The data come from the RNA Mapping Database (RMDB), library OK2TST. Chemical mapping of a 177-nucleotide RNA with DMS and 2A3. The reactions ran in a buffer of 150 mM KOAc, 10 mM MgCl2 and 150 mM bicine (pH 8.5), at 24 C.
RNA sequence: GGGAACGACUCGAGUAGAGUCGAAAAGUACAAGGGUUGCUUCCCAUAUGCAGACCAUACGUUCACUUCAUGGUAGAUUAUCUCAGGUAAUAGGAAGAGCAAGGAGCAGCAAGCUCCAAGAGGCAAAGAGACAGUAGGAAUUCGUUCCUACUGUCUCAAAAGAAACAACAACAACAAC
Reactivity to DMS in 0.01 (KOAc 150mM, MgCl2 10mM, bicine 150mM(pH8.5), 24C), signal-to-noise 5, nucleotides 027 to 126: g000u000a030c050a060a290g000g000g010u000u000g000c190u000u000c000c010c000a120u000a050u010g010c060a110g000a070c040c030a070u010a080c180g010u000u000c090a070c070u010u000c090a050u010g010g020u010a050g010a090u010u000a060u010c050u010c080a060g000g000u010a050a060u010a070g000g010a050a050g010a080g000c040a070a110g000g000a020g010c010a110g020c180a100a130g010c020u000c020c020a030a060g000a070g020g010c110a050a100a110
Reactivity to 2A3 in 0.01 (KOAc 150mM, MgCl2 10mM, bicine 150mM(pH8.5), 24C), signal-to-noise 4, nucleotides 027 to 126: g100u050a040c040a060a100g020g010g040u030u030g020c090u050u020c000c010c010a030u080a030u100g050c010a010g070a110c010c010a030u050a100c080g050u030u090c080a050c090u040u030c070a040u050g040g060u060a060g030a120u100u090a060u080c060u030c060a040g060g020u040a080a050u060a100g080g050a060a030g010a000g070c050a050a060g000g000a010g020c030a020g040c080a120a060g000c010u000c010c000a010a010g040a020g010g030c030a040a060a060